[RMDB]
RNA sequence: GGGAACGACUCGAGUAGAGUCGAAAAUGCCGUCACGACGACAAUGAGCAAAAGGAACAACUGAAGGUUCACAGGGCCUGAUUCUGCUGGUCGGGAUAUUGCGUUGUCGAUCAAACGAGUACGCGAAGACGAUACUGUUAUUCGUAACAGUAUCGUCAAAAGAAACAACAACAACAAC
Reactivity to 2A3 in 0.01 (KOAc 150mM, MgCl2 10mM, bicine 150mM(pH8.5), 24C), signal-to-noise 7, nucleotides 027 to 126: u070g010c010c000g000u030c030a020c190g040a000c010g030a010c020a030a070u130g050a070g070c010a020a020a030a060g130g010a040a040c020a020a040c070u170g100a130a030g130g010u030u020c060a050c040a140g100g030g000c010c000u040g010a090u170u100c030u100g090c030u060g030g000u040c000g020g000g010a050u110a070u110u080g010c010g020u010u020g070u030c020g010a220u060c030a000a050a020c030g010a050g050u050a050c040g010c030g120a080a030
Reactivity to DMS in 0.01 (KOAc 150mM, MgCl2 10mM, bicine 150mM(pH8.5), 24C), signal-to-noise 7, nucleotides 027 to 126: u010g010c030c050g010u000c070a060c090g000a070c020g010a040c030a030a050u000g000a160g040c030a030a030a120a130g000g010a090a040c040a060a090c140u010g010a130a120g010g000u000u010c030a120c140a130g010g000g030c020c010u010g000a090u010u000c080u000g000c130u010g000g000u000c000g010g000g010a070u010a080u000u000g010c010g010u000u000g000u000c000g000a060u010c070a060a060a070c030g000a110g030u010a050c080g020c090g010a080a120